[RMDB]
RNA sequence: GGGAACGACUCGAGUAGAGUCGAAAAGAUAUGGACCGUGUGACGAGCAACUGUCGGAAACGACAGAAUUGCGAUGAGUCACCGGUCCUAAGUCAAAGCUUCCUUAUGACUUCGGUCAUAAGGAAGCCCAACUUAUGUACUUCGGUACAUAAGUUGGAAAAGAAACAACAACAACAAC
Reactivity to DMS in 0.01 (KOAc 150mM, MgCl2 10mM, bicine 150mM(pH8.5), 24C), signal-to-noise 6, nucleotides 027 to 126: g000a020u000a030u010g000g010a010c000c000g010u020g020u010g010a010c010g000a030g020c010a010a050c010u000g010u000c000g020g010a010a010a030c000g000a020c000a010g000a090a160u000u000g010c000g010a240u010g010a300g000u000c000a010c000c010g000g000u000c000c000u000a000a050g000u000c000a110a140a170g010c010u000u000c000c000u000u000a010u000g000a020c000u000u020c220g030g010u000c000a010u000a000a000g000g000a010a000g000c000
Reactivity to 2A3 in 0.01 (KOAc 150mM, MgCl2 10mM, bicine 150mM(pH8.5), 24C), signal-to-noise 8, nucleotides 027 to 126: g010a000u010a010u040g000g000a010c010c030g120u220g010u010g300a020c050g050a030g050c000a000a030c010u000g000u000c000g000g010a010a010a000c010g010a000c010a010g070a130a210u100u020g000c030g100a300u210g030a010g000u000c000a000c010c000g000g000u000c000c000u000a000a000g000u000c010a090a070a030g000c000u000u000c000c000u000u010a000u000g010a000c010u040u110c300g150g000u000c000a000u000a010a000g000g000a000a000g000c000

Conditions: 150 mM KOAc, 10 mM MgCl2 and 150 mM bicine (pH 8.5), 24 C. The record gives the reactivity of an RNA of 177 nucleotides to DMS and 2A3. 2A3 adducts were read by reverse transcription with SuperScript II with manganese. It was measured as part of the RMDB library TTRDES.